Source information
The record gives the reactivity of an RNA of 207 nucleotides to DMS and 2A3. For DMS, 3,289 sequencing reads were counted. The RNA was probed in 150 mM KOAc, 10 mM MgCl2 and 150 mM bicine (pH 8.5) at 24 C. Source: RMDB library OK3TST, as collected in RNAgym.
RNA sequence: GGGAACGACUCGAGUAGAGUCGAAAAGGACUCCGUGAGGAGUCCGUGCAGCGAGAGCUGCACAAGCGGUUAUUGACACACGGUCCGCCUGCUCUUCGAUGUGGAGAAGAGCAGAGUAGUAGGCGCACGAUUUAUAGUGCGCCGUACGAGUGUGUGAAAGUAUCAAGACAUUCGUGUCUUGAUACUUAAAAGAAACAACAACAACAAC
Reactivity to DMS in 0.01 (KOAc 150mM, MgCl2 10mM, bicine 150mM(pH8.5), 24C), signal-to-noise 1, nucleotides 027 to 156: g000g030a010c010u010c010c010g000u010g000a230g050g000a030g000u000c000c010g020u000g020c000a010g000c000g010a290g000a300g020c010u000g010c000a010c000a000a150g040c000g040g020u000u000a070u000u000g000a080c000a030c030a010c000g020g070u000c010c020g000c040c000u010g010c000u000c000u010u000c000g010a270u040g040u020g030g000a300g010a010a020g000a010g000c000a000g000a050g020u000a070g010u000a080g000g010c000g000c000a000c000g000a230u000u000u010a160u000a120g010u000g000c000g030c000c000g010u000a010c020g000a120g010u000g060u000g010u000g010a070
Reactivity to 2A3 in 0.01 (KOAc 150mM, MgCl2 10mM, bicine 150mM(pH8.5), 24C), signal-to-noise 1, nucleotides 027 to 156: g000g000a000c000u010c000c010g000u050g020a020g020g000a000g010u000c000c000g000u000g000c000a000g000c000g020a030g010a010g010c010u000g030c000a010c010a040a010g020c000g000g000u050u160a030u010u090g060a000c000a000c000a000c000g020g000u000c000c000g000c000c000u010g010c000u000c000u000u000c000g060a080u090g100u170g090g120a100g000a010a000g000a000g010c000a000g010a000g000u000a000g000u000a010g000g000c010g000c000a010c000g000a040u040u130u060a120u070a060g000u000g000c000g000c010c000g000u000a000c000g010a020g000u000g000u010g000u000g030a000